[RMDB]
RNA sequence: GGGAACGACUCGAGUAGAGUCGAAAAACUGACAAGGCUAGGGGGCACACCCGCUUACCAAACCUUAUCAAACUCCGAAUACCGUGCAAUGGAACGUGGCAGUGAGACAGUGGGGGAUAAGCUUCAUUUCUAGAUUCAGAUUCGUCUGAAUCUAGAAAAAAGAAACAACAACAACAAC
Reactivity to DMS in 0.01 (KOAc 150mM, MgCl2 10mM, bicine 150mM(pH8.5), 24C), signal-to-noise 5, nucleotides 027 to 126: a130c140u020g010a030c060a040a060g000g000c040u010a300g020g000g000g000g000c020a120c120a120c250c120c080g000c020u000u010a120c040c020a020a130a220c040c000u000u000a090u000c030a030a080a120c100u000c020c020g000a090a090u030a090c060c020g010u010g010c100a070a060u030g010g000a040a050c070g040u010g020g010c020a030g020u000g010a080g010a050c080a030g010u000g030g010g000g010g000a100u020a060a090g020c050u000u000c070a060u000
Reactivity to 2A3 in 0.01 (KOAc 150mM, MgCl2 10mM, bicine 150mM(pH8.5), 24C), signal-to-noise 6, nucleotides 027 to 126: a000c030u020g030a010c010a040a030g010g010c000u070a010g030g010g010g010g000c020a050c010a050c050c040c010g020c020u020u060a240c010c000a030a050a020c000c010u030u010a040u070c030a040a080a020c040u010c020c000g030a100a060u080a140c000c050g050u030g070c050a110a130u120g050g030a080a020c040g020u030g030g000c030a020g020u010g090a030g010a040c040a040g040u060g000g020g020g010g000a040u040a130a030g030c010u080u040c040a060u020
Structure probing data (DMS and 2A3) for a 177-nucleotide construct.
Source: RMDB libraries RFM100 and RFMREP, as collected in RNAgym.
The reactions ran in a buffer of 150 mM KOAc, 10 mM MgCl2 and 150 mM bicine (pH 8.5), at 24 C.
For 2A3 the reverse transcriptase was SuperScript II with manganese.